Chemical mapping of a 207-nucleotide RNA with 2A3. For 2A3, 554 sequencing reads were counted.
RNA sequence: GGGAACGACUCGAGUAGAGUCGAAAAAAAUCGCAUAGCAAAGAGUCAAAAAAAUAGAGUGCUUUGCGAGACCUACCAAGGGUGAAGAGAUACCAUCCAAGGAGCUGAAGAGAAAUCUCACUUUAGAAACGGAAGCGGUGCUUCGGCACCGCUUCAAGAUGAAUCAGUACUUCGGUACUGAUUCAUCAAAAGAAACAACAACAACAAC
Reactivity to 2A3 in 0.01 (KOAc 150mM, MgCl2 10mM, bicine 150mM(pH8.5), 24C), signal-to-noise 1, nucleotides 027 to 156: a010a000a020u010c000g000c010a000u000a020g020c020a120a140a000g080a090g090u130c090a110a080a090a070a030a050a120u140a070g070a050g120u020g000c000u000u010u000g010c000g000a010g020a000c000c010u030a040c030c060a060a070g030g000g000u020g020a070a020g040a030g020a060u090a090c030c000a040u060c010c000a020a050g010g010a010g090c140u140g050a080a060g050a040g050a050a130a110u010c010u070c010a050c050u110u180u080a070g000a080a120a020c060g050g000a010a010g020c000g000g000u000g020c020u050u060c170g050g020c020a000c010c010g080c000u010u020c000a000a000